[RMDB]
RNA sequence: GGGAACGACUCGAGUAGAGUCGAAAACAUGCCACCACAACAAAUUCACAUGCACCGAGUGCAAACCACAAGCCGAAAACCAACGCAACAACGCGCUCAAAGACCGACUCAAAGCAAUCAGACAGCAGGCAAAAAACUCGUCUCAUCCUCAGUGAAGAGCACUCUAACUAUUCGUAGUUAGAGUGCUAAAAGAAACAACAACAACAAC
Reactivity to 2A3 in 0.01 (KOAc 150mM, MgCl2 10mM, bicine 150mM(pH8.5), 24C), signal-to-noise 4, nucleotides 027 to 156: c030a040u090g040c010c010a040c010c020a060c040a100a040c040a040a130a020u140u070c040a020c010a090u090g030c030a020c040c070g050a000g010u080g030c020a040a030a030c010c010a040c050a120a000g020c010c020g090a060a050a030a060c030c010a050a020c050g010c040a000a090c020a030a050c090g030c020g000c040u010c080a070a110a030g040a040c000c030g050a040c020u030c070a020a080a000g020c010a010a080u060c000a040g050a120c010a010g000c000a000g010g000c000a020a010a040a010a030a060c040u060c050g040u020c010u000c030a060u040c000c010u070c020a030g010u150g130a050a130g080
Reactivity to DMS in 0.01 (KOAc 150mM, MgCl2 10mM, bicine 150mM(pH8.5), 24C), signal-to-noise 1, nucleotides 027 to 156: c070a030u000g010c020c050a040c020c010a100c030a080a130c060a080a090a080u000u010c070a090c060a020u010g000c000a110c090c030g020a160g040u010g010c010a020a000a150c050c060a080c040a050a090g020c000c070g000a040a070a110a210c040c000a000a020c060g020c010a130a040c090a130a060c050g000c010g060c010u000c060a010a090a210g000a060c120c020g000a080c020u010c010a070a110a110g020c010a030a020u000c110a070g000a190c020a040g010c010a070g000g000c020a020a060a050a040a090a010c050u020c000g010u000c030u000c020a020u000c030c010u040c020a130g000u000g060a110a080g010

This 207-nucleotide RNA was probed chemically with 2A3 and DMS. Values are in units of 0.01, from 0 to 300, in steps of 10. It was measured as part of the RMDB library OK3TST. The reactions ran in a buffer of 150 mM KOAc, 10 mM MgCl2 and 150 mM bicine (pH 8.5), at 24 C.